Structure probing data (DMS) for a 177-nucleotide construct. Conditions: 150 mM KOAc, 10 mM MgCl2 and 150 mM bicine (pH 8.5), 24 C. It was measured as part of the RMDB library OK2TST.
RNA sequence: GGGAACGACUCGAGUAGAGUCGAAAAAUUACUUGAACGCAGGAGUUUGAGAUCAGCCCAGGCAAUAUCGUGAGACCCCAUCUCUACAAAAAAUUAGAAAUUAGCUGGUUGUGGUGGUGCACACUGGCGUCCAUGUAAACUUCGGUUUACAUGGACGAAAAGAAACAACAACAACAAC
Reactivity to DMS in 0.01 (KOAc 150mM, MgCl2 10mM, bicine 150mM(pH8.5), 24C), signal-to-noise 1, nucleotides 027 to 126: a070u000u000a080c040u000u000g000a030a080c180g030c120a100g030g010a040g040u000u010u010g000a050g030a100u010c060a040g030c020c020c020a160g000g000c080a040a040u000a030u000c060g010u000g030a100g030a030c010c020c010c040a050u000c010u000c000u000a010c110a000a010a090a020a040a060u010u000a080g000a070a050a030u010u000a050g000c040u000g010g000u020u000g030u000g010g020u000g010g010u000g000c070a080c050a030c070u010g010g000